[RMDB]
RNA sequence: GGGAACGACUCGAGUAGAGUCGAAAACUACUGGGUGGCAAGGGCUGACCGGCAAGGGAAGAAGUUUCCAGUCAUCUUGUGCCACUUCGGUGCGCAGAUGGGCGAGGUGUCCGGUCCCAUGAGUCAACACAUUUAUUCACUUCGGUGAAUAAAUGUGAAAAGAAACAACAACAACAAC
Reactivity to DMS in 0.01 (KOAc 150mM, MgCl2 10mM, bicine 150mM(pH8.5), 24C), signal-to-noise 7, nucleotides 027 to 126: c020u010a090c080u010g010g000g020u010g020g000c060a090a100g000g010g000c160u010g000a050c020c030g000g020c080a100a110g000g020g010a060a050g010a140a110g010u010u010u010c010c010a270g010u010c020a010u000c010u020u040g020u010g000c120c020a020c030u010u040c130g010g020u010g010c020g020c030a020g000a060u000g000g000g010c050g000a140g000g000u020g000u010c030c010g000g000u000c010c050c030a070u030g010a140g010u010c090a110a200
Reactivity to 2A3 in 0.01 (KOAc 150mM, MgCl2 10mM, bicine 150mM(pH8.5), 24C), signal-to-noise 8, nucleotides 027 to 126: c060u130a040c040u050g030g050g040u060g020g000c050a080a090g060g010g010c050u060g020a030c000c000g040g020c040a060a060g070g020g040a010a060g090a100a070g090u030u070u010c010c010a010g040u010c000a020u010c000u070u140g040u040g080c090c020a010c000u060u070c110g030g000u050g000c030g000c010a020g020a050u050g000g040g080c050g040a060g040g070u060g030u040c020c010g020g010u020c000c000c000a070u090g030a010g070u060c020a040a060